[RMDB]
An RNA of 207 nucleotides, treated with DMS and 2A3 and read out base by base. 2A3 adducts were read by reverse transcription with SuperScript II with manganese. Reactivities are rounded to 0.1 and cut off at 0 and 3.
RNA sequence: GGGAACGACUCGAGUAGAGUCGAAAACUGUGUCUGACCAGCAGGUGAUAAACGAAUAGACUGCCUGCCAGAAAGUAUUGAACUGAGAUCUCUUUGACCUCAAAAAAGAUCAUGAGCAUAAGAGGGUGGUGCAUUCGAAAAAAUGGCCAGGGAAGAACCUAGCAUUUAUCUUCGGAUAAAUGCUAGGAAAAGAAACAACAACAACAAC
Reactivity to DMS in 0.01 (KOAc 150mM, MgCl2 10mM, bicine 150mM(pH8.5), 24C), signal-to-noise 1, nucleotides 027 to 156: c090u010g070u010g000u000c000u020g050a090c000c020a110g060c010a050g010g060u010g040a100u000a050a140a180c100g000a060a200u010a190g000a110c010u010g020c000c000u000g000c020c030a120g000a110a060a070g040u010a040u000u020g000a110a140c100u000g000a070g020a040u010c000u010c120u000u000u000g010a070c060c000u010c060a010a060a070a110a090a030g030a040u010c030a030u000g010a060g060c060a080u000a060a080g010a130g000g040g030u000g010g010u000g030c030a090u010u040c040g050a000a050a040a090a020a060u000g000g000c050c030a170g030g020g000a030a120g000a090a170
Reactivity to 2A3 in 0.01 (KOAc 150mM, MgCl2 10mM, bicine 150mM(pH8.5), 24C), signal-to-noise 3, nucleotides 027 to 156: c020u020g020u030g020u130c030u040g050a040c010c010a020g000c000a010g000g060u050g130a160u130a170a100a030c070g020a040a160u050a050g100a060c020u030g000c000c000u010g000c000c010a030g050a060a050a010g040u050a110u150u110g040a090a040c030u050g020a080g040a140u020c020u000c000u070u030u100g060a080c010c000u090c000a090a060a040a030a020a040g050a030u080c040a080u080g010a000g000c030a020u030a230a000g020a070g070g010g000u010g000g020u050g010c000a010u010u100c060g090a110a030a040a000a000a000u050g000g010c020c050a040g000g020g040a020a050g120a010a010
The reactions ran in a buffer of 150 mM KOAc, 10 mM MgCl2 and 150 mM bicine (pH 8.5), at 24 C. DMS (dimethyl sulfate) methylates the pairing face of unpaired adenines and cytosines. For 2A3, 1,308 sequencing reads were counted. Values cover nucleotides 27 to 156.